Annotation: The record gives the reactivity of an RNA of 177 nucleotides to DMS and 2A3. Reactivities are given for positions 27 through 126. The reactions ran in a buffer of 150 mM KOAc, 10 mM MgCl2 and 150 mM bicine (pH 8.5), at 24 C.
RNA sequence: GGGAACGACUCGAGUAGAGUCGAAAAUAUUACGUUAAACUACCCAUACAACUAACCGACAUGGGACACGCUCCUUCAUACCGGGAGCGCUGUGCUGGCUGGCUCCACAGCGAUGGUUGGGAUGAAGGAGGACAUCAUUGUUCGCAAUGAUGUCCUCAAAAGAAACAACAACAACAAC
Reactivity to DMS in 0.01 (KOAc 150mM, MgCl2 10mM, bicine 150mM(pH8.5), 24C), signal-to-noise 7, nucleotides 027 to 126: u020a070u030u030a070c150g010u030u020a040a070a060c130u020a100c020c000c010a110u060a100c160a060a190c050u000a040a040c020c000g010a120c210a070u030g010g020g000a060c050a090c020g000c000u000c000c000u000u010c130a080u040a100c200c120g000g010g010a000g010c000g010c130u000g020u010g010c020u010g000g000c030u000g010g010c060u010c090c090a080c030a010g000c030g000a070u030g020g020u010u000g000g000g000a130u030g010a100a090g010
Reactivity to 2A3 in 0.01 (KOAc 150mM, MgCl2 10mM, bicine 150mM(pH8.5), 24C), signal-to-noise 9, nucleotides 027 to 126: u220a040u120u150a060c100g040u040u150a080a090a040c040u140a090c010c000c000a030u090a070c070a080a050c020u060a030a020c020c010g060a060c070a170u200g010g000g030a010c010a010c030g000c000u010c000c000u090u130c050a090u100a230c030c050g020g000g000a000g000c000g000c020u010g000u030g060c010u020g060g000c010u010g020g000c030u040c080c040a070c010a030g010c020g050a080u140g060g000u020u020g000g000g020a050u130g040a050a030g130